[RMDB]
RNA sequence: GGGAACGACUCGAGUAGAGUCGAAAAGAAAGAAAGAACCCUUCCCGUGGGGCUGGAUCUUCCAGAUGGUGCGGGCCGGGACAAGCCGGAGAGUGUCCCGGUUUCAGAAACAACCUUCGGCAGCCAAACUAGACUACCCACUUCGGUGGGUAGUCAACUUUUCUUCACACUUCGGUGUGAAGAAAAGAAAAGAAACAACAACAACAAC
Reactivity to 2A3 in 0.01 (KOAc 150mM, MgCl2 10mM, bicine 150mM(pH8.5), 24C), signal-to-noise 1, nucleotides 027 to 156: g020a000a020a000g020a030a070a000g020a250a290c020c000c000u010u000c000c000c000g010u000g000g010g000g000c000u000g000g020a090u150c070u170u040c160c000a000g000a010u010g010g060u030g020c000g010g000g010c010c000g000g000g000a010c000a010a000g000c010c000g000g020a000g000a010g020u020g000u000c010c000c000g000g000u000u010u000c000a020g000a000a010a020c040a020a010c010c000u000u010c000g000g000c000a050g040c050c020a050a090a120c120u110a060g000a000c000u010a010c000c000c000a010c000u050u050c160g050g000u000g000g000g010u000a000g000u010c000a000a000